[RMDB]
RNA sequence: GGGAACGACUCGAGUAGAGUCGAAAAAACAUCGGCUCGCAGGAUCUCGACGACGUGCAGGCCGAGUUCGAGCGUGUGCUCGACGAGUUCGCCGAGGCAUGCGACUCGGGCGACGACGACCGGAUCAACGACGCGCUCGCGAAGUUGGACGCCGCUGUGCAGGAUAGAUAUUCGUAUCUAUCCUGCAAAAAGAAACAACAACAACAAC
Reactivity to DMS in 0.01 (KOAc 150mM, MgCl2 10mM, bicine 150mM(pH8.5), 24C), signal-to-noise 1, nucleotides 027 to 156: a040a070c070a030u010c010g020g000c020u010c000g090c060a140g020g040a110u000c040u000c000g010a120c060g030a070c020g010u010g030c040a070g050g040c010c010g000a040g040u000u020c010g020a080g050c030g070u000g030u010g000c000u000c000g040a030c000g010a300g020u010u030c000g060c000c000g000a060g030g000c020a060u010g000c040g010a070c000u000c000g020g010g020c020g010a130c000g040a120c060g010a090c010c010g000g000a120u020c030a020a100c000g010a210c010g000c050g030c100u010c080g010c010g030a070a250g010u010u000g010g000a100c040g030c000c010g020c050u010g030
Reactivity to 2A3 in 0.01 (KOAc 150mM, MgCl2 10mM, bicine 150mM(pH8.5), 24C), signal-to-noise 3, nucleotides 027 to 156: a000a000c010a070u030c030g010g000c020u000c050g070c030a030g080g180a260u060c080u050c110g120a090c040g010a000c040g060u080g010c070a060g020g020c040c020g000a030g010u020u040c060g030a040g030c000g010u060g030u060g160c000u020c000g000a030c000g000a030g130u200u300c010g010c010c000g000a030g030g070c080a020u060g000c010g130a140c030u000c000g030g030g020c010g020a070c050g020a060c040g050a050c030c050g000g040a070u070c030a060a010c040g020a020c010g000c040g070c050u140c090g000c010g010a030a000g020u010u010g050g050a030c110g040c010c000g000c110u100g000